Structure probing data (2A3 and DMS) for a 177-nucleotide construct. Conditions: 150 mM KOAc, 10 mM MgCl2 and 150 mM bicine (pH 8.5), 24 C. 2A3 adducts were read by reverse transcription with SuperScript II with manganese. It was measured as part of the RMDB libraries RFM100 and RFMREP. High 2A3 reactivity points to a flexible backbone, as in loops and unpaired stretches.

RNA sequence: GGGAACGACUCGAGUAGAGUCGAAAAAGAUGGUGGCUAAAUCCUCAUUAGGGGGUGAUGCCUAUGCUUGAAUGUAUAGUUUUACUCCUGGAAAGGAGCUAGACUUGUCUGUGUUUGAAGCACUUACUGUAUAAGAUUAGUUCGCUAAUCUUAUACAAAAAGAAACAACAACAACAAC
Reactivity to 2A3 in 0.01 (KOAc 150mM, MgCl2 10mM, bicine 150mM(pH8.5), 24C), signal-to-noise 9, nucleotides 027 to 126: a000g130a060u170g020g130u070g020g000c000u020a060a060a080u160c000c010u020c030a120u110u300a220g050g000g000g000g020u020g000a010u100g010c000c000u020a050u090g030c010u050u040g060a100a020u080g070u110a070u040a130g000u000u000u020u080a010c000u000c000c000u010g040g120a080a100a040g010g000a010g000c010u010a010g000a020c000u030u060g040u100c110u080g070u010g070u040u060u110g130a050a010g020c020a010c040u050u120a040c060
Reactivity to DMS in 0.01 (KOAc 150mM, MgCl2 10mM, bicine 150mM(pH8.5), 24C), signal-to-noise 9, nucleotides 027 to 126: a050g010a060u010g010g020u010g010g010c010u000a210a160a090u000c000c000u000c010a240u020u020a160g020g010g000g000g000u000g000a190u020g000c010c000u000a050u010g000c010u000u000g000a100a080u010g010u010a040u000a010g010u000u000u000u000a140c000u000c000c000u000g010g050a110a180a020g000g000a010g010c070u000a020g000a010c010u000u000g010u000c100u010g010u000g010u000u000u010g010a060a110g010c050a090c070u000u010a090c210